[RMDB]
RNA sequence: GGGAACGACUCGAGUAGAGUCGAAAAGAUAUGGAUUUAGACAUGAGUACUAAUCGGAAACGAUUAGAACUCAACAGCUAACUGUCCUAAGUCAAAAGCGAACAGCGAGUUCGCUCGCUGUUCGCAACACUAGUCGUAUCUUCGGAUACGACUAGUGAAAAGAAACAACAACAACAAC
Reactivity to DMS in 0.01 (KOAc 150mM, MgCl2 10mM, bicine 150mM(pH8.5), 24C), signal-to-noise 3, nucleotides 027 to 126: g020a060u000a300u010g010g020a000u020u000u000a040g000a030c080a210u000g010a020g030u000a110c000u000a000a000u010c010g010g000a150a070a170c010g000a000u000u000a000g020a070a020c000u000c010a020a090c300a140g000c050u000a030a050c300u000g000u000c020c000u000a080a060g000u000c040a080a070a090a100g020c000g030a010a010c000a010g000c000g010a000g000u000u000c100g000c000u000c000g050c010u000g020u000u000c000g020c010a020a080
Reactivity to 2A3 in 0.01 (KOAc 150mM, MgCl2 10mM, bicine 150mM(pH8.5), 24C), signal-to-noise 2, nucleotides 027 to 126: g040a020u110a080u240g000g000a010u020u070u080a050g030a080c110a170u090g010a010g000u020a070c010u010a010a010u000c020g000g080a070a100a030c000g020a000u000u030a000g000a020a000c000u000c020a020a040c050a010g050c010u030a020a070c110u110g040u020c000c020u050a160a020g010u030c040a050a030a170a080g030c020g010a000a010c000a000g000c000g010a020g020u100u150c200g110c180u000c000g000c000u010g000u010u000c000g010c000a000a000